Structure probing data (DMS and 2A3) for a 177-nucleotide construct. The reactions ran in a buffer of 150 mM KOAc, 10 mM MgCl2 and 150 mM bicine (pH 8.5), at 24 C.

RNA sequence: GGGAACGACUCGAGUAGAGUCGAAAAUCUGCCUUCUGAUGCCAGAGUGGGUCAUCACUCCUUGAUGAGAUACUACAAACAGUGAUUUGGCUUGUCAAGAGCUGUGGUAGUUGCUAAAUAUUGUGAGCAAGUGGUACGUAUUCGUACGUACCACUUGAAAAGAAACAACAACAACAAC
Reactivity to DMS in 0.01 (KOAc 150mM, MgCl2 10mM, bicine 150mM(pH8.5), 24C), signal-to-noise 6, nucleotides 027 to 126: u000c050u000g000c020c030u000u000c040u000g010a130u000g020c070c030a100g000a100g020u000g000g000g000u010c070a040u010c030a050c040u010c050c040u010u000g010a040u000g010a040g000a150u010a070c110u010a050c030a030a060a040c050a080g010u000g000a280u000u010u000g010g010c070u000u000g010u000c020a030a030g000a200g010c030u010g020u010g000g010u000a030g010u000u000g020c080u000a050a060a110u000a100u000u010g010u000g000a080g010
Reactivity to 2A3 in 0.01 (KOAc 150mM, MgCl2 10mM, bicine 150mM(pH8.5), 24C), signal-to-noise 4, nucleotides 027 to 126: u000c000u030g070c020c010u080u080c050u040g070a090u120g070c040c010a030g030a050g160u150g020g040g040u070c020a040u040c010a040c020u030c000c010u050u050g050a050u060g010a050g000a050u080a110c010u030a030c030a030a260a000c010a080g030u030g220a160u030u000u040g050g010c030u120u180g050u050c020a020a000g000a020g070c020u020g010u010g040g000u030a020g010u020u080g050c010u020a030a090a050u220a130u150u180g080u030g080a060g070
Notes:
DMS (dimethyl sulfate) methylates the pairing face of unpaired adenines and cytosines.